RNA sequence: GGGAACGACUCGAGUAGAGUCGAAAAGAAGUAGUCUCAACCGUGUGGAAAAGAAUGGCUAUAACCACAAAAACCUGAGGAAACAGGAAGACUACUUACAAGCCAUGUAGAUAGCAUACGGAAUAAAGACGUCAUAGUGAUUCGUCACUAUGACGUCAAAAGAAACAACAACAACAAC
Reactivity to DMS in 0.01 (KOAc 150mM, MgCl2 10mM, bicine 150mM(pH8.5), 24C), signal-to-noise 3, nucleotides 027 to 126: g000a030a000g010u000a000g000u010c010u000c170a130a090c000c020g020u010g010u000g000g000a080a060a070a060g000a120a010u000g010g000c000u010a180u000a040a150c000c050a080c110a020a080a080a060a170c000c000u010g000a140g000g040a130a100a060c010a010g000g020a160a060g000a050c020u000a020c000u000u000a090c130a120a010g000c000c000a000u000g040u010a110g000a060u020a080g030c030a000u000a000c000g030g000a220a070u070a100a050a080
Reactivity to 2A3 in 0.01 (KOAc 150mM, MgCl2 10mM, bicine 150mM(pH8.5), 24C), signal-to-noise 4, nucleotides 027 to 126: g140a000a010g000u010a000g000u010c040u020c050a070a110c000c030g010u020g010u010g040g060a060a080a020a030g110a010a070u020g000g000c010u020a010u070a220a030c000c010a050c080a070a050a050a050a040c010c010u070g010a080g080g240a110a080a050c010a000g010g020a020a000g000a010c020u000a000c010u010u020a080c080a020a000g000c000c000a020u030g030u080a060g050a170u090a030g050c010a010u030a030c030g000g060a070a060u190a090a020a010